About this RNA:
This 177-nucleotide RNA was probed chemically with DMS and 2A3. For DMS, 2,337 sequencing reads were counted. Values cover nucleotides 27 to 126.

RNA sequence: GGGAACGACUCGAGUAGAGUCGAAAACAGGUCGGACCGCGAGGAGGUGGAGAUACCAUGCCGACCCGAAGAAGGAAAGGAGGACACGGACGACAAACCGUAGGUACUCUUGCCCUUUAUUGUUGGGCCUUUCAUAAUACUUCGGUAUUAUGAAAGGAAAAGAAACAACAACAACAAC
Reactivity to DMS in 0.01 (KOAc 150mM, MgCl2 10mM, bicine 150mM(pH8.5), 24C), signal-to-noise 4, nucleotides 027 to 126: c110a090g030g020u000c020g020g040a180c050c040g020c160g010a130g000g020a110g000g010u000g000g010a190g000a150u000a040c070c060a080u000g010c010c020g000a070c040c000c020g010a100a120g030a040a010g050g010a080a300a070g000g010a010g020g000a130c070a010c000g000g000a070c070g000a060c300a100a060a070c030c000g010u000a040g020g020u000a190c030u020c020u000u000g010c300c000c010u020u000u010a070u030u000g030u010u010g010g010g000
Reactivity to 2A3 in 0.01 (KOAc 150mM, MgCl2 10mM, bicine 150mM(pH8.5), 24C), signal-to-noise 2, nucleotides 027 to 126: c030a000g000g040u010c010g020g040a060c000c030g010c040g040a070g070g030a090g000g080u050g050g030a150g030a040u120a130c000c000a030u090g050c000c000g000a020c000c020c010g110a100a070g020a000a010g030g010a030a030a000g020g000a010g000g030a010c010a000c000g040g060a060c040g030a010c110a050a080a010c010c000g000u030a050g000g080u130a020c000u010c000u010u010g010c010c000c010u010u070u030a190u080u050g040u020u040g020g040g000